[RMDB]
Description
The data come from the RNA Mapping Database (RMDB), library RFM100. Chemical mapping of a 177-nucleotide RNA with 2A3 and DMS. Conditions: 150 mM KOAc, 10 mM MgCl2 and 150 mM bicine (pH 8.5), 24 C. 2A3 adducts were read by reverse transcription with SuperScript II with manganese.
RNA sequence: GGGAACGACUCGAGUAGAGUCGAAAACUGGCUUCACAGAGCAGCGACAACUGCCCGCUUCCAACGGUGGAAGGAUAAUGGGCCGCUGCACUCCUAGGACCAAUUGGGCCUCGCAGCCUACUCCAGCUUCUACGCCAACGUUCGCGUUGGCGUAGAAAAAAGAAACAACAACAACAAC
Reactivity to 2A3 in 0.01 (KOAc 150mM, MgCl2 10mM, bicine 150mM(pH8.5), 24C), signal-to-noise 3, nucleotides 027 to 126: c050u000g000g000c010u090u100c060a070c000a040g020a020g000c000a000g000c000g100a050c090a190a060c140u110g000c010c000c010g070c000u000u000c030c030a240a130c290g080g280u080g020g020a000a000g010g000a060u060a090a070u290g010g000g000c000c010g000c000u000g000c000a010c020u000c000c040u050a130g000g050a010c000c010a000a080u180u110g100g000g000c020c030u060c060g090c110a030g010c000c000u010a020c000u020c020c000a000g020c000
Reactivity to DMS in 0.01 (KOAc 150mM, MgCl2 10mM, bicine 150mM(pH8.5), 24C), signal-to-noise 1, nucleotides 027 to 126: c040u000g000g000c160u000u060c070a070c180a110g000a100g100c000a040g000c070g000a300c150a130a140c180u000g000c000c010c000g030c060u000u000c000c000a030a280c230g080g030u040g000g000a010a030g000g060a060u110a160a070u070g000g000g000c000c000g000c000u000g010c040a120c080u000c120c000u000a220g100g000a030c000c020a070a100u000u000g000g000g000c000c010u000c090g100c140a180g000c010c000u010a000c040u000c060c060a230g040c150